Chemical mapping of a 177-nucleotide RNA with DMS and 2A3.
For 2A3 the reverse transcriptase was SuperScript II with manganese.
DMS adducts were read by reverse transcription with MarathonRT.
For DMS, 1,785 sequencing reads were counted.
RNA sequence: GGGAACGACUCGAGUAGAGUCGAAAAGAAGUAUAUGGUCUGACACCUGCCCGGUGCUGGAAGGUUAAAAGGAGUAGUUAUCUUCGGAGAAGCUAUGAAUUGAAGCCCCAGUAAACGGCGGCCGUAACCGAUUUCUACGGUUCGCCGUAGAAAUCGGAAAAGAAACAACAACAACAAC
Reactivity to DMS in 0.01 (KOAc 150mM, MgCl2 10mM, bicine 150mM(pH8.5), 24C), signal-to-noise 2, nucleotides 027 to 126: g010a060a230g000u030a040u010a040u010g000g010u070c020u010g020a100c000a110c050c020u020g010c030c000c020g000g010u020g010c010u040g000g000a110a050g020g000u020u040a020a210a000a000g020g020a300g000u040a000g000u000u000a300u000c020u000u090c170g000g000a000g000a090a200g000c000u010a000u000g000a290a090u020u000g000a190a110g000c030c000c000c030a000g020u000a050a080a050c030g010g010c000g000g000c000c000g000u000a010a090
Reactivity to 2A3 in 0.01 (KOAc 150mM, MgCl2 10mM, bicine 150mM(pH8.5), 24C), signal-to-noise 3, nucleotides 027 to 126: g100a080a010g120u050a040u020a030u170g050g000u000c050u070g060a030c030a070c100c010u020g010c010c020c010g040g010u000g010c000u000g020g090a220a250g050g000u120u050a040a070a000a040g000g010a030g000u000a010g030u230u100a050u010c000u020u060c260g050g000a010g000a000a000g000c000u000a000u040g010a010a020u000u000g000a050a010g000c000c010c000c000a010g000u010a020a160a020c000g010g000c000g010g000c000c000g010u020a040a040